[RMDB]
RNA sequence: GGGAACGACUCGAGUAGAGUCGAAAAGCCUCUCCUUGUCGGUGAAGCCACCCCUGAGAGGCCUCUUCCUAGGUCCGGAGUCUAUCUCCAUCUGAUCGGUUCGGGCCCUCUUCGCCGGGGGAGCCCCCUCUCCUUCCUUGUCUUUCUUUCCGAGAAUUCUGUUAUAUAUGUUCGCAUAUAUAACAGAAAAAGAAACAACAACAACAAC
Reactivity to 2A3 in 0.01 (KOAc 150mM, MgCl2 10mM, bicine 150mM(pH8.5), 24C), signal-to-noise 2, nucleotides 027 to 156: g000c000c000u000c010u000c020c060u070u060g200u270c110g000g020u040g130a130a010g070c080c060a050c030c000c000c000u000g000a010g020a040g030g000c010c010u050c030u030u030c000c000u030a100g000g040u050c120c110g000g050a030g040u020c070u180a080u150c020u030c060c010a050u060c080u120g050a050u140c080g040g000u070u040c050g000g010g000c020c020c010u030c030u120u170c070g070c040c030g010g000g010g020g010a000g030c030c010c000c000c010u020c010u020c020c000u100u030c000c020u030u050g010u070c000u030u050u000c000u010u060u060c030c030g160a050g150a250a180u150